[RMDB]
RNA sequence: GGGAACGACUCGAGUAGAGUCGAAAAGAUAUGGACGUAGGGAGUCGAGUGUCGGAAACGACAUGACGACUUUGAUCUGACGUCCUAAGUCAAAACAAAGGCGCAUUCUUCGGAAUGCGCCUUUGAAUCGUAAAUUUGCGUUCGCGCAAAUUUACGAAAAAGAAACAACAACAACAAC
Reactivity to DMS in 0.01 (KOAc 150mM, MgCl2 10mM, bicine 150mM(pH8.5), 24C), signal-to-noise 1, nucleotides 027 to 126: g000a110u020a300u000g010g020a000c020g030u020a100g000g020g000a020g030u000c000g000a300g020u000g000u000c000g000g000a080a030a170c000g000a010c000a000u000g000a070c040g000a030c000u000u000u000g010a080u000c030u020g000a020c000g020u000c000c010u000a010a140g000u020c050a040a080a080a220c000a000a000a000g000g010c000g000c000a020u000u000c030u000u010c260g000g000a020a000u000g000c000g000c010c000u000u000u000g000a040a100
This 177-nucleotide RNA was probed chemically with DMS. Reactivities are given for positions 27 through 126. DMS adducts were read by reverse transcription with MarathonRT. The RNA was probed in 150 mM KOAc, 10 mM MgCl2 and 150 mM bicine (pH 8.5) at 24 C. For DMS, 767 sequencing reads were counted.